[RMDB]
An RNA of 207 nucleotides, treated with DMS and 2A3 and read out base by base.
The reactions ran in a buffer of 150 mM KOAc, 10 mM MgCl2 and 150 mM bicine (pH 8.5), at 24 C.
For DMS the reverse transcriptase was MarathonRT.
Reactivities are rounded to 0.1 and cut off at 0 and 3.
The data come from the RNA Mapping Database (RMDB), library OK3TST.
Reactivities are given for positions 27 through 156.

RNA sequence: GGGAACGACUCGAGUAGAGUCGAAAAUUUGGCCGGAGCCGGAUCCACGAGUGGGGUCUGUUUGCCAUGGAACCCAUUGCUGCUGACGAGAUGGUCAUCGAAUACGUGGGUCAGAACAUCCGUCAGGUGAGGCUGCACUCCCAGCCCCGCCCCGGCAUCGUAAAUACCUGUUCGCAGGUAUUUACGAAAAAGAAACAACAACAACAAC
Reactivity to DMS in 0.01 (KOAc 150mM, MgCl2 10mM, bicine 150mM(pH8.5), 24C), signal-to-noise 2, nucleotides 027 to 156: u000u010u000g030g010c010c010g030g000a080g040c040c080g010g010a030u000c000c010a020c000g010a240g030u000g010g030g030g100u000c010u020g000u000u000u020g000c210c170a070u000g000g040a030a080c020c000c020a250u000u000g030c000u000g020c020u020g000a140c040g000a240g000a080u010g010g000u000c150a060u010c080g000a130a090u000a070c140g020u000g010g040g010u010c000a070g010a050a080c010a050u000c000c010g020u000c020a070g060g040u000g010a020g000g020c030u000g000c000a110c100u000c030c050c000a090g000c020c000c010c010g010c000c000c020c010g040g030c040a140
Reactivity to 2A3 in 0.01 (KOAc 150mM, MgCl2 10mM, bicine 150mM(pH8.5), 24C), signal-to-noise 3, nucleotides 027 to 156: u060u040u090g090g000c010c000g010g000a010g040c060c060g020g000a020u040c020c030a020c040g030a030g010u080g030g040g010g020u050c030u020g060u030u200u230g080c060c030a020u040g010g070a170a150c010c010c000a000u000u030g040c060u030g000c010u010g000a010c010g020a010g020a300u040g050g070u090c040a070u170c080g110a070a060u120a140c050g010u100g010g020g040u070c050a030g020a100a020c010a010u000c020c000g000u020c040a020g000g040u070g030a030g010g000c040u040g040c040a080c070u070c030c030c000a000g000c000c010c000c000g010c000c020c010c000g010g010c030a040